[RMDB]
Chemical mapping of a 207-nucleotide RNA with DMS and 2A3. It was measured as part of the RMDB library OK3TST.
RNA sequence: GGGAACGACUCGAGUAGAGUCGAAAAGUGGAGGUUCCUUAAUGUUUUCAUUAAAAUGCAUAGUCCUUAGAUACUACUACUAAAAAAUAUGGACUUCUCCCAAUUCAGAAAACACUAGUUUACUUGAUCCAGCAAUUAGCAGUAAAAAUUUCAGGUACCAUAAAUGCUAGUUCGCUAGCAUUUAUGGAAAAGAAACAACAACAACAAC
Reactivity to DMS in 0.01 (KOAc 150mM, MgCl2 10mM, bicine 150mM(pH8.5), 24C), signal-to-noise 1, nucleotides 027 to 156: g000u030g010g010a060g030g000u000u010c010c030u000u000a040a060u000g010u000u000u000u020c050a160u000u010a040a030a050a090u000g010c110a060u000a050g020u000c010c000u010u000a060g010a220u000a120c090u000a030c040u000a120c040u050a010a010a060a160a070a170u010a050u000g000g000a020c000u000u000c050u000c030c010c010a100a130u010u010c040a230g000a120a040a050a060c020a000c040u000a050g000u000u000u010a050c040u000u010g010a080u010c060c020a060g010c000a060a040u010u000a020g000c000a070g000u020a030a080a100a040a070u000u000u000c050a080g030g000u000a200
Reactivity to 2A3 in 0.01 (KOAc 150mM, MgCl2 10mM, bicine 150mM(pH8.5), 24C), signal-to-noise 4, nucleotides 027 to 156: g080u080g000g040a050g020g040u070u020c040c000u040u100a090a110u080g030u030u160u070u040c020a040u040u220a080a080a090a060u150g040c060a050u090a100g000u000c010c000u100u070a070g110a200u090a110c020u020a010c010u000a010c020u160a070a160a020a040a020a140u120a110u060g000g000a000c000u060u000c030u020c010c010c010a010a080u110u110c040a010g070a050a090a050a000c030a040c050u070a100g080u070u060u110a040c020u050u040g020a030u070c040c030a020g020c020a100a180u120u070a120g010c040a010g050u160a070a090a080a120a160u060u090u030c030a030g040g030u080a020